[RMDB]
RNA sequence: GGGAACGACUCGAGUAGAGUCGAAAACUCCAGAAAGGAGGAAGGAGCUCUCGAACGCCCCCCCGACCCUCGGAUGGGCCGCUUCCGGCAGGGAAGCCCGAAGGUGGGAGAGGGGGAGAACACUUCGCAAACCUGUACUUCGGUACAGGUAAAAGAAACAACAACAACAAC
Reactivity to 2A3 in 0.01 (KOAc 150mM, MgCl2 10mM, bicine 150mM(pH8.5), 24C), signal-to-noise 7, nucleotides 027 to 129: c010u000c000c000a020g150a110a110a020g010g010a010g010g010a000a030g030g020a030g030c000u010c010u010c040g030a060a030c040g090c000c010c010c000c000c000c000g070a090c010c030c020u020c010g050g000a060u120g110g020g010c020c020g060c010u040u020c010c030g080g060c080a090g060g000g040a020a010g010c000c000c010g020a050a020g050g060u130g030g010g020a010g050a050g000g000g000g020g010a000g010a010a010c030a020c040u080u090c050g020c130a140a100
Reactivity to DMS in 0.01 (KOAc 150mM, MgCl2 10mM, bicine 150mM(pH8.5), 24C), signal-to-noise 6, nucleotides 027 to 129: c040u000c020c030a070g050a070a070a100g000g010a040g000g000a040a040g030g020a080g020c060u020c000u030c060g030a060a080c160g010c000c010c000c000c020c000c020g010a260c020c010c010u020c030g040g000a240u060g000g020g000c080c100g000c080u040u010c000c000g020g000c220a060g050g000g020a050a120g020c000c000c000g000a110a110g000g020u020g000g000g000a110g030a150g000g000g000g000g000a030g020a060a040c140a090c090u040u030c030g030c150a060a100